[RMDB]
RNA sequence: GGGAACGACUCGAGUAGAGUCGAAAAAUCAGGAUGAGGGCCCUGAGUGUAACCCUCCAAUACAGACUGUUCGCAUGAAAGAAAAUGCAGAAGUGGGAACAACAAGCAAUGGAUAUAAAGCAUAUGAAUAUCUCCUUACGUUCGCGUAAGGAGAUAUAAAAGAAACAACAACAACAAC
Reactivity to 2A3 in 0.01 (KOAc 150mM, MgCl2 10mM, bicine 150mM(pH8.5), 24C), signal-to-noise 1, nucleotides 027 to 126: a000u000c000a010g020g000a030u100g030a100g000g000g100c000c000c030u040g030a070g150u120g070u060a030a050c020c000c000u000c000c000a080a030u080a100c030a010g190a100c050u030g010u030u080c010g000c090a000u030g080a000a030a010g020a010a150a050a040u180g010c060a010g000a140a000g020u030g060g070g000a040a040c000a000a030c010a010a010g070c030a050a150u170g100g000a030u050a010u080a190a120a050g110c000a030u130a110u300g070a100
Reactivity to DMS in 0.01 (KOAc 150mM, MgCl2 10mM, bicine 150mM(pH8.5), 24C), signal-to-noise 3, nucleotides 027 to 126: a110u000c010a000g000g000a110u010g010a090g020g000g030c220c010c010u000g000a050g030u020g010u010a110a060c010c000c010u010c020c150a070a070u000a050c130a090g000a120c110u010g010u030u000c040g010c010a060u010g000a070a160a150g000a030a060a080a080u010g010c040a120g000a090a080g040u000g000g000g010a030a040c040a030a040c090a060a060g000c060a050a050u000g010g000a030u020a040u010a070a100a080g000c100a060u000a080u000g010a140